RNA sequence: GGGAACGACUCGAGUAGAGUCGAAAAGAUAUGGAGACACAACGGAUCUCGAGAGAGGGACGUAACAUCAUUCGGAAACGAAUGUGGUCCUACCCACCUCUCCGGAUCCGUUGUGUCUCCUAAGUCAGAAUAUUUUGAACUUCGGUUCAAAAUAUUCAAAAGAAACAACAACAACAAC
Reactivity to DMS in 0.01 (KOAc 150mM, MgCl2 10mM, bicine 150mM(pH8.5), 24C), signal-to-noise 3, nucleotides 027 to 126: g040a030u010a300u000g000g000a010g010a010c010a010c000a000a010c010g010g010a000u000c000u000c300g030a120g010a010g010a140g000g000g000a080c300g000u010a040a090c060a060u030c010a000u000u010c000g010g000a110a100a240c000g010a000a000u010g020u030g000g020u010c300c110u010a070c040c110c090a300c040c000u000c000u000c010c130g000g000a010u000c020c020g000u010u000g000u000g010u000c000u000c000c010u000a010a060g010u000c050a130

This 177-nucleotide RNA was probed chemically with DMS. Conditions: 150 mM KOAc, 10 mM MgCl2 and 150 mM bicine (pH 8.5), 24 C. The data come from the RNA Mapping Database (RMDB), library TTRINS.